[RMDB]
RNA sequence: GGGAACGACUCGAGUAGAGUCGAAAACAGGACGUUAGCAUAGGUCCAUUUUACUAUGCAGAUUGCAUCGUCGGAGACGACGUAGAGACCGCGACAGCAGGGUCGAUGAACUGCUGAAUUACACCUCUUAUCAUAGCGAGGGAUCAAGCUAUGUACAAUGCAUUUAGCCAUUCGUGGCUAAAUGCAUAAAAGAAACAACAACAACAAC
Reactivity to 2A3 in 0.01 (KOAc 150mM, MgCl2 10mM, bicine 150mM(pH8.5), 24C), signal-to-noise 1, nucleotides 027 to 156: c000a000g050g090a020c010g000u090u190a010g000c000a030u030a050g000g070u000c030c040a000u000u060u060u070a080c010u000a000u000g000c000a000g050a160u170u300g070c090a140u060c100g010u000c020g090g010a030g020a060c050g000a000c000g000u040a090g030a000g030a030c010c000g000c040g050a000c020a000g050c010a000g000g070g000u120c170g000a040u210g050a070a060c000u000g000c000u020g120a040a000u170u130a000c060a000c050c050u030c010u130u020a010u120c000a000u000a000g000c000g000a010g010g040g030a050u040c030a090a000g000c000u010a010u010g000u010a000c130a000
Notes: Structure probing data (2A3) for a 207-nucleotide construct. Reactivities are given for positions 27 through 156.